An RNA of 177 nucleotides, treated with 2A3 and DMS and read out base by base.
2A3 adducts were read by reverse transcription with SuperScript II with manganese.
Source: RMDB library M2PK50, as collected in RNAgym.
DMS (dimethyl sulfate) methylates the pairing face of unpaired adenines and cytosines.
For DMS, 3,580 sequencing reads were counted.
[RMDB]
RNA sequence: GGGAACGACUCGAGUAGAGUCGAAAACACACAAGGUUCGCCUUGUGUGCAAGAAUAGACGAAUACUACCGUAGAAGUAUUCAGGUCUCAUAACUACGGAAAUGGCGUUCUGCUUCGGCAGAACGAAACAUGAUGCAUGGUUCGCCAUGCAUCAUGUAAAAGAAACAACAACAACAAC
Reactivity to 2A3 in 0.01 (KOAc 150mM, MgCl2 10mM, bicine 150mM(pH8.5), 24C), signal-to-noise 5, nucleotides 027 to 126: c000a000c000a010c000a000a000g040g000u060u070c160g120c040c000u000u000g000u000g000u000g010c010a020a040g090a080a110u170a140g080a040c040g010a000a000u000a020c010u070a290c000c010g000u000a000g020a160a000g030u020a010u020u010c030a010g080g080u000c030u000c050a120u130a230a070c020u010a010c000g000g100a020a050a060u200g180g010c020g000u000u000c000u000g020c000u030u050c120g090g000c000a010g000a010a000c000g000a000a010
Reactivity to DMS in 0.01 (KOAc 150mM, MgCl2 10mM, bicine 150mM(pH8.5), 24C), signal-to-noise 3, nucleotides 027 to 126: c010a020c010a010c000a020a010g020g020u000u010c230g040c010c000u000u000g010u000g010u000g000c040a070a080g010a120a110u000a060g010a100c130g000a010a000u000a000c000u000a120c010c010g000u000a010g000a160a020g000u000a000u000u000c010a100g010g000u010c000u000c030a070u010a070a130c000u000a000c010g000g000a250a070a110u010g010g020c000g000u000u000c000u000g010c000u000u000c220g020g000c000a000g010a000a000c000g000a030a050